[RMDB]
RNA sequence: GGGAACGACUCGAGUAGAGUCGAAAAAAUGUGCGCCUGCUUUGGGCUUUGCCAGCGCAAGGAUAUGACCGAGCGGAACGCCGGUCCAUUUGGCAAUCGUGCUCCAGCCUUCCACGCAGUCGUGGCACCAGUCAUUUAGUUUCGACUAAAUGACUGGAAAAGAAACAACAACAACAAC
Reactivity to 2A3 in 0.01 (KOAc 150mM, MgCl2 10mM, bicine 150mM(pH8.5), 24C), signal-to-noise 4, nucleotides 027 to 126: a000a000u160g010u020g000c010g020c000c010u020g010c020u070u060u050g010g010g000c000u050u030u030g030c020c010a020g000c070g010c090a040a060g090g010a080u080a120u300g020a020c020c000g030a050g010c040g080g200a200a050c130g000c000c000g020g000u020c100c000a080u080u090u080g030g000c000a020a050u100c090g070u100g010c030u050c020c010a030g000c010c000u070u100c060c010a040c050g000c010a030g040u070c030g010u050g060g010c020a040
Reactivity to DMS in 0.01 (KOAc 150mM, MgCl2 10mM, bicine 150mM(pH8.5), 24C), signal-to-noise 4, nucleotides 027 to 126: a080a070u000g020u000g010c140g010c030c010u000g000c030u000u010u000g020g000g000c040u000u000u000g040c050c020a120g010c090g000c090a090a070g000g000a110u000a100u000g020a040c000c010g010a160g030c000g010g030a100a140c120g020c010c000g000g000u000c020c050a020u000u010u010g010g010c050a090a080u020c110g010u000g020c020u010c020c040a070g010c030c030u000u000c080c050a090c180g000c060a030g000u010c050g040u000g010g010c160a110